The record gives the reactivity of an RNA of 207 nucleotides to DMS and 2A3. The DMS profile rests on 2,148 reads. For 2A3 the reverse transcriptase was SuperScript II with manganese.

RNA sequence: GGGAACGACUCGAGUAGAGUCGAAAAGUGCCUCGUCGGCCCGGCAUGCCAACCUGAUCCGAAGUUCAAGGUGGUUUCUCUGGCCUUCCAGAGAGAUGCGCGUCGGAAGAAGCGACGAACAAACCUUAAAACAAAACGACGUUCGCGUCGUUUUGAACAUAAAGGCAUGCUUCGGCAUGCCUUUAUGAAAAGAAACAACAACAACAAC
Reactivity to DMS in 0.01 (KOAc 150mM, MgCl2 10mM, bicine 150mM(pH8.5), 24C), signal-to-noise 1, nucleotides 027 to 156: g000u010g030c040c010u000c020g040u000c000g000g070c000c010c040g000g060c030a080u010g030c010c030a040a060c010c010u020g000a100u000c080c070g000a140a130g030u010u000c060a100a090g000g010u010g030g010u020u000u010c010u000c000u010g010g020c190c090u020u010c020c010a040g000a010g010a010g010a030u010g000c030g040c060g040u010c030g060g000a140a110g000a100a090g000c000g010a120c030g020a050a080c040a110a140a110c020c020u000u000a110a040a110a130c000a020a010a000a020c000g000a010c020g070u010u000c290g030c010g000u000c020g030u000u010u000u010g010a080a170
Reactivity to 2A3 in 0.01 (KOAc 150mM, MgCl2 10mM, bicine 150mM(pH8.5), 24C), signal-to-noise 3, nucleotides 027 to 156: g050u040g050c000c030u030c000g020u020c020g000g070c000c010c000g020g000c030a060u100g040c020c010a080a130c060c010u000g010a030u040c000c000g020a030a020g020u050u030c060a040a040g000g000u030g020g030u020u060u010c000u020c000u000g000g010c040c080u220u160c030c000a000g000a000g000a010g000a040u130g090c070g010c040g080u010c020g000g050a080a070g040a080a040g120c000g010a000c010g020a040a040c050a050a060a120c010c030u170u190a070a140a000a060c010a010a000a000a010c000g010a000c000g020u030u070c230g020c010g100u010c000g010u000u000u000u000g000a010a010
For DMS the reverse transcriptase was MarathonRT. It was measured as part of the RMDB library M2RFPK.